[RMDB]
RNA sequence: GGGAACGACUCGAGUAGAGUCGAAAAGAUAUGGAGCCAGAGGCCACAGCGAAGAACUCGGAAACGAGGGAGCUGAUGGCUACCCACCUGGCUCCUAAGUCAAAACGAACCACUUCGGUGGUUCGAACGUGUUUAAUUGGUUCGCCAAUUAAACACGAAAAGAAACAACAACAACAAC
Reactivity to 2A3 in 0.01 (KOAc 150mM, MgCl2 10mM, bicine 150mM(pH8.5), 24C), signal-to-noise 2, nucleotides 027 to 126: g040a000u160a070u300g010g000a010g010c010c000a000g000a020g020g000c020c010a010c000a010g010c010g210a300a040g020a070a030c010u020c020g010g040a090a040a070c010g000a010g020g000g020a010g020c000u050g050a300u010g060g010c010u000a000c000c010c010a030c000c000u000g010g000c000u000c000c000u010a010a000g010u030c050a010a030a070a090c010g000a000a000c000c000a000c020u060u070c300g140g000u000g000g000u020u000c000g000a020a010
Reactivity to DMS in 0.01 (KOAc 150mM, MgCl2 10mM, bicine 150mM(pH8.5), 24C), signal-to-noise 3, nucleotides 027 to 126: g000a060u000a300u010g010g020a000g030c010c010a000g000a120g000g000c010c000a030c010a020g000c010g000a070a200g010a120a180c000u010c020g000g010a100a100a140c000g000a020g000g010g000a060g000c000u000g000a110u000g000g010c000u000a010c070c010c050a300c050c010u000g000g000c000u000c000c000u000a020a040g020u010c050a040a070a080a260c030g030a010a030c010c000a020c000u000u010c220g030g000u000g000g000u000u000c000g010a030a070

Structure probing data (2A3 and DMS) for a 177-nucleotide construct. Values are in units of 0.01, from 0 to 300, in steps of 10.